[RMDB]
The record gives the reactivity of an RNA of 177 nucleotides to 2A3 and DMS. DMS (dimethyl sulfate) methylates the pairing face of unpaired adenines and cytosines. It was measured as part of the RMDB library OK1LIB. The RNA was probed in 150 mM KOAc, 10 mM MgCl2 and 150 mM bicine (pH 8.5) at 24 C. For 2A3, 65,171 sequencing reads were counted.
RNA sequence: GGGAACGACUCGAGUAGAGUCGAAAACAGGCGCGUCCGAAGUAUGGGAAGCAUAAGUGGACACACCGCCUUCCGCUCGCAGCACCGUAUCUCGAAUACUUUCUCGGUGCGGGGAGCCUAGGCGCGGUCUACUGUGGGGGUUCGCUCCUACGGUAGAAAAAGAAACAACAACAACAAC
Reactivity to 2A3 in 0.01 (KOAc 150mM, MgCl2 10mM, bicine 150mM(pH8.5), 24C), signal-to-noise 9, nucleotides 027 to 126: c040a010g060g000c010g000c000g030u010c010c020g030a070a010g030u060a030u130g040g000g020a030a000g020c010a030u020a080a020g030u020g030g020a010c010a000c010a010c060c010g000c000c000u010u000c010c010g000c000u000c000g180c010a020g000c000a000c000c000g010u030a060u030c140u040c050g040a050a030u090a140c040u050u070u040c050u010c020g000g000u000g000c000g000g010g020g020a010g000c000c000u010a010g000g000c000g000c020g010g010
Reactivity to DMS in 0.01 (KOAc 150mM, MgCl2 10mM, bicine 150mM(pH8.5), 24C), signal-to-noise 9, nucleotides 027 to 126: c080a110g000g000c040g010c040g010u020c010c020g000a090a100g000u010a050u030g000g010g010a060a080g010c050a070u020a080a070g010u010g000g000a070c140a120c070a130c170c030g000c030c010u000u000c100c220g000c000u000c010g000c040a140g000c010a020c000c000g000u010a040u010c080u030c150g000a100a090u040a090c130u010u010u010c070u010c020g000g000u000g000c000g000g000g000g000a030g000c000c050u000a070g000g010c010g010c110g000g010